[RMDB]
RNA sequence: GGGAACGACUCGAGUAGAGUCGAAAAAAAUGGUGAGAUUAACCGGUACGGUACAUGGAAUUAACCACUCCAGUCAUUCUUACGGCCAACCGAAAGAGUGAGGACAUCUUGAAGCAACGACGGUGCGUUUGCUGUUAGGAUUCGUCCUAACAGCAAAAAAAGAAACAACAACAACAAC
Reactivity to DMS in 0.01 (KOAc 150mM, MgCl2 10mM, bicine 150mM(pH8.5), 24C), signal-to-noise 6, nucleotides 027 to 126: a070a020a070u020g000g010u000g000a070g000a080u010u010a100a080c060c020g010g010u020a060c100g020g020u010a060c130a090u000g000g010a050a020u000u010a110a060c060c030a160c120u000c010c010a050g000u010c040a050u010u020c020u020u010a120c040g000g000c160c180a100a100c030c000g000a070a040a020g000a030g020u000g010a060g000g000a080c110a040u010c040u000u000g010a090a070g020c050a050a030c070g010a070c070g000g000u000g000c030g020
Reactivity to 2A3 in 0.01 (KOAc 150mM, MgCl2 10mM, bicine 150mM(pH8.5), 24C), signal-to-noise 4, nucleotides 027 to 126: a000a000a020u160g030g000u090g000a140g020a080u110u040a050a070c010c010g000g040u080a050c060g040g000u040a040c030a080u050g050g010a020a020u030u010a040a010c010c010a030c010u010c010c000a000g050u010c010a020u030u000c010u030u060a050c020g020g000c050c050a090a130c050c000g020a050a020a010g030a000g010u030g010a040g040g050a010c010a050u060c030u030u100g080a040a010g040c020a020a030c030g050a010c060g020g030u030g020c030g020